[RMDB]
RNA sequence: GGGAACGACUCGAGUAGAGUCGAAAAGAUAUGGAGCACGUAGACAUGGUGAAACAUCGGAAACGAUGUUCCACCAACAGCUACAGUGCUCCUAAGUCAAACCAUACGACCCUUCGGGGUCGUAUGGGGUGAAACUAUCCUUCGGGAUAGUUUCACCAAAAGAAACAACAACAACAAC
Reactivity to 2A3 in 0.01 (KOAc 150mM, MgCl2 10mM, bicine 150mM(pH8.5), 24C), signal-to-noise 3, nucleotides 027 to 126: g000a010u020a000u060g000g000a020g010c000a000c000g010u020a010g040a030c210a300u300g010g000u010g010a010a000a030c000a010u000c000g010g000a000a010a010c000g000a000u000g020u020u000c010c000a020c000c010a290a020c050a030g000c010u000a000c150a060g000u000g000c000u000c000c000u000a010a000g000u000c020a050a040a110c000c000a000u000a000c000g000a010c000c020c020u040u080c300g130g000g000g000u010c000g000u010a000u000g000g000
Reactivity to DMS in 0.01 (KOAc 150mM, MgCl2 10mM, bicine 150mM(pH8.5), 24C), signal-to-noise 2, nucleotides 027 to 126: g000a020u000a060u010g000g010a010g010c000a000c000g010u000a000g000a000c030a300u020g060g050u000g000a050a000a020c000a000u000c010g010g000a020a000a030c000g010a000u000g010u000u000c010c000a000c000c000a050a030c190a100g000c000u000a000c000a150g040u000g000c000u010c000c000u000a000a050g000u010c010a140a120a300c000c000a010u000a010c010g000a020c010c000c000u000u000c190g060g000g000g000u000c000g000u010a000u000g000g010